Chemical mapping of a 177-nucleotide RNA with DMS and 2A3. For 2A3, 3,798 sequencing reads were counted.
RNA sequence: GGGAACGACUCGAGUAGAGUCGAAAAGAUAUGGACAUCCCGUAACUCCUUGGAUUUAUACAGGAAUAUAUAUCGGAAACGAUAUAUUAGUACUGUAUUGUCAGGAGGAUAAGGGAUGUCCUAAGUCCAUCUGUAGUUCCUUCGGGAACUACAGAUGAAAAGAAACAACAACAACAAC
Reactivity to DMS in 0.01 (KOAc 150mM, MgCl2 10mM, bicine 150mM(pH8.5), 24C), signal-to-noise 2, nucleotides 027 to 126: g000a090u010a300u000g000g010a010c010a020u000c010c010c000g000u000a140a300c020u000c010c000u000u010g030g010a020u010u040u000a000u000a020c010a000g000g000a180a240u000a000u000a010u000a010u010c010g010g000a150a110a220c010g000a020u000a010u000a000u000u000a050g010u010a070c000u020g010u000a000u000u000g000u000c020a030g000g010a010g000g000a040u000a090a200g010g000g010a000u000g000u020c000c000u000a010a100g010u000c030
Reactivity to 2A3 in 0.01 (KOAc 150mM, MgCl2 10mM, bicine 150mM(pH8.5), 24C), signal-to-noise 2, nucleotides 027 to 126: g020a020u100a060u150g000g000a000c010a010u000c000c000c000g010u020a040a020c000u000c030c000u050u300g300g000a050u300u300u040a000u050a010c000a020g060g000a060a000u030a000u000a010u000a010u020c000g000g030a040a050a070c020g000a000u010a010u000a000u000u010a010g030u000a000c000u010g010u020a010u010u010g000u020c000a000g020g000a000g030g000a010u020a010a000g030g140g000a000u010g000u010c000c000u000a010a000g010u010c010